[RMDB]
RNA sequence: GGGAACGACUCGAGUAGAGUCGAAAAAGGUGAGACUGUUGGCUUUAAUCCUACCAAUAACUUCAGCUGCAUCAUGAAGAGUAGACAGAGAUUCUGGCGGUUGAGGGUUUCUUCGUAGAGGUUGAUCAUAUCCUUGAGUAUUCGUACUCAAGGAUAUAAAAGAAACAACAACAACAAC
Reactivity to 2A3 in 0.01 (KOAc 150mM, MgCl2 10mM, bicine 150mM(pH8.5), 24C), signal-to-noise 9, nucleotides 027 to 126: a000g120g020u090g000a080g010a050c060u050g060u080u040g040g040c040u050u030u090a040a020u030c000c000u000a030c010c030a030a050u110a070a040c010u030u020c010a010g000c010u020g000c020a110u070c020a050u250g050a050a050g040a030g110u150a030g050a120c120a030g120a000g020a070u050u020c020u020g030g000c010g020g000u010u010g000a040g010g020g010u020u080u020c040u030u040c020g020u020a020g020a040g070g020u010u030g030a030u060c030
Reactivity to DMS in 0.01 (KOAc 150mM, MgCl2 10mM, bicine 150mM(pH8.5), 24C), signal-to-noise 9, nucleotides 027 to 126: a060g010g000u000g010a080g010a090c070u010g000u010u010g010g010c090u010u000u010a070a080u000c030c020u000a080c050c080a060a080u010a050a100c040u000u000c010a030g000c030u000g010c040a090u010c060a060u020g000a030a030g010a110g020u010a070g010a110c190a100g010a120g000a120u000u000c020u000g010g010c020g010g010u000u010g010a040g000g000g000u010u010u000c060u010u000c170g010u000a050g010a090g010g010u010u010g000a080u010c110

This 177-nucleotide RNA was probed chemically with 2A3 and DMS.
High DMS reactivity at an A or C suggests that its Watson-Crick edge is free.
The RNA was probed in 150 mM KOAc, 10 mM MgCl2 and 150 mM bicine (pH 8.5) at 24 C.